[RMDB]
This 207-nucleotide RNA was probed chemically with 2A3.
For 2A3 the reverse transcriptase was SuperScript II with manganese.
RNA sequence: GGGAACGACUCGAGUAGAGUCGAAAAAAUCAUGCAUCAGACAGACAGAUCCCAUCCAGCUCUCAGGCAGCAGUGAGGUGGCAGGGGAGGGAGAGGAAGGGACAGUUUAUUAACAAGCAAAUAAAUGUCCAUGAUAAUUUCAGAUUGUGAACCAUGACAAUCAUAGCCACUUCGGUGGCUAUGAUUGAAAAGAAACAACAACAACAAC
Reactivity to 2A3 in 0.01 (KOAc 150mM, MgCl2 10mM, bicine 150mM(pH8.5), 24C), signal-to-noise 1, nucleotides 027 to 156: a000a000u100c070a030u040g070c000a000u000c000a000g100a040c000a000g090a000c000a020g070a060u110c050c050c020a000u010c030c040a000g040c040u030c010u010c070a060g090g040c000a010g000c000a010g000u000g000a120g020g050u160g020g010c090a100g040g010g110g020a190g040g030g000a020g000a000g000g090a120a110g020g000g000a000c000a010g000u000u010u010a060u020u010a070a030c070a210a000g120c060a040a100a000u030a020a040a040u110g000u050c000c060a080u120g040a060u070a130a170u080u220u120c070a060g130a160u080u000g010u030g070a060a050c190c050a070u030g000a020